Structure probing data (2A3 and DMS) for a 177-nucleotide construct.
RNA sequence: GGGAACGACUCGAGUAGAGUCGAAAAGCGGUUAUUCCCUGCAAGCUGUGCUUAUCUAGGGAGCGUCCCUUGGAGGGUUUGGGGUCUGGGAGGUCUGCUCGCACCACUUGCUGCAGCUGGGGGUGGGCAGAAGUCAGAAGUUCGCUUCUGACUUCUGAAAAGAAACAACAACAACAAC
Reactivity to 2A3 in 0.01 (KOAc 150mM, MgCl2 10mM, bicine 150mM(pH8.5), 24C), signal-to-noise 2, nucleotides 027 to 126: g030c040g070g000u150u080a070u170u080c000c020c000u000g030c020a020a040g040c090u200g090u170g130c000u090u140a160u140c090u120a020g050g000g010a030g050c050g050u070c010c000c000u010u040g100g020a090g020g020g000u090u120u130g040g000g000g030u000c100u070g070g050g010a080g040g040u050c020u010g030c020u020c080g040c010a070c030c000a120c130u080u110g000c010u020g020c000a030g000c020u010g000g000g010g030g040u090g000g020g020
Reactivity to DMS in 0.01 (KOAc 150mM, MgCl2 10mM, bicine 150mM(pH8.5), 24C), signal-to-noise 3, nucleotides 027 to 126: g010c060g020g000u020u010a100u010u000c010c000c000u000g000c110a050a070g020c040u010g020u010g000c050u000u000a070u000c080u000a050g010g010g010a080g020c130g010u000c030c050c020u010u010g000g010a120g000g020g010u000u000u000g000g010g000g010u000c110u000g000g010g010a130g000g000u020c020u000g000c020u000c150g000c030a080c120c110a070c140u010u010g000c050u000g020c040a090g010c140u000g010g010g020g000g010u010g000g010g000
It was measured as part of the RMDB library OK2TST.